[RMDB]
RNA sequence: GGGAACGACUCGAGUAGAGUCGAAAAGUAUAGAAGCAUGAGACCGCAUGCGGUAUACGAUGAAUCGCGGUCGAAUCCGUUGUGCGAAAGCACUUCGGUAAUGCAUAUCGGUAGGCAGAUCUGCCCGGAUCAGCUACCGUAAUUAGUACGGGCAAGACCUAAAUCAUGCAUUCGUGCAUGAUUUAGGAAAAGAAACAACAACAACAAC
Reactivity to DMS in 0.01 (KOAc 150mM, MgCl2 10mM, bicine 150mM(pH8.5), 24C), signal-to-noise 2, nucleotides 027 to 156: g000u010a150u010a120g020a160a190g020c010a000u000g020a300g000a070c000c020g000c000a150u000g020c000g000g010u000a080u000a120c070g000a190u020g010a110a050u000c050g050c020g010g000u000c040g000a040a140u010c000c010g050u010u000g000u000g020c020g020a200a120a210g000c010a000c010u000u000c010g020g000u000a030a040u010g000c040a110u000a080u000c010g000g000u000a020g010g020c050a160g010a060u010c000u000g030c020c040c010g010g010a130u000c020a120g030c020u000a010c010c010g000u000a010a050u010u000a110g010u000a050c020g030g020g050c060a100a140g000a140
Reactivity to 2A3 in 0.01 (KOAc 150mM, MgCl2 10mM, bicine 150mM(pH8.5), 24C), signal-to-noise 6, nucleotides 027 to 156: g120u100a080u090a220g140a190a020g010c010a000u000g000a000g010a050c000c010g030c040a040u150g050c030g030g030u160a180u090a150c110g010a040u160g090a090a120u110c070g000c010g010g000u020c000g000a000a010u000c000c000g000u000u010g000u010g000c010g040a030a010a010g000c000a000c000u000u010c010g000g000u010a030a010u020g000c010a030u040a030u140c010g040g000u010a010g160g210c110a030g000a010u000c020u070g000c000c010c000g010g000a000u010c010a010g040c010u000a010c000c000g000u010a010a030u060u100a030g140u030a020c020g010g010g000c020a020a020g050a070